[RMDB]
RNA sequence: GGGAACGACUCGAGUAGAGUCGAAAAGAUAUGGAGAGUCAUGGACAUGCUAUGUCGGAAACGAUGCAUAGCAACAGCCAUACUCUCCUAAGUCAAAGGCAUACGAGACUUCGGUCUCGUAUGCCAACAUUACCGUAUUGUUCGCAAUACGGUAAUGAAAAGAAACAACAACAACAAC
Reactivity to DMS in 0.01 (KOAc 150mM, MgCl2 10mM, bicine 150mM(pH8.5), 24C), signal-to-noise 8, nucleotides 027 to 126: g010a020u000a300u010g000g000a020g000a030g000u000c240a010u000g010g010a090c120a190u000g010c000u000a000u000g000u000c020g000g000a070a050a130c020g010a080u010g010c030a010u000a010g010c000a030a080c300a160g000c010c000a010u000a020c000u000c000u000c000c000u000a010a040g000u010c030a080a120a120g010g020c000a000u000a010c010g000a010g000a010c000u000u010c230g020g000u000c000u000c000g000u000a000u000g000c000c000a010a030
Reactivity to 2A3 in 0.01 (KOAc 150mM, MgCl2 10mM, bicine 150mM(pH8.5), 24C), signal-to-noise 8, nucleotides 027 to 126: g020a010u050a030u100g010g000a010g000a000g030u140c250a020u010g020g010a170c060a130u060g000c000u010a000u020g030u070c030g030g040a070a060a030c030g030a060u290g090c030a000u010a000g010c010a040a040c080a040g030c000c000a000u000a010c000u010c000u000c000c000u000a020a000g010u000c030a080a070a150g000g000c000a000u000a000c000g010a000g010a000c000u090u190c300g060g000u000c000u000c000g000u000a000u000g000c000c000a000a000

The record gives the reactivity of an RNA of 177 nucleotides to DMS and 2A3.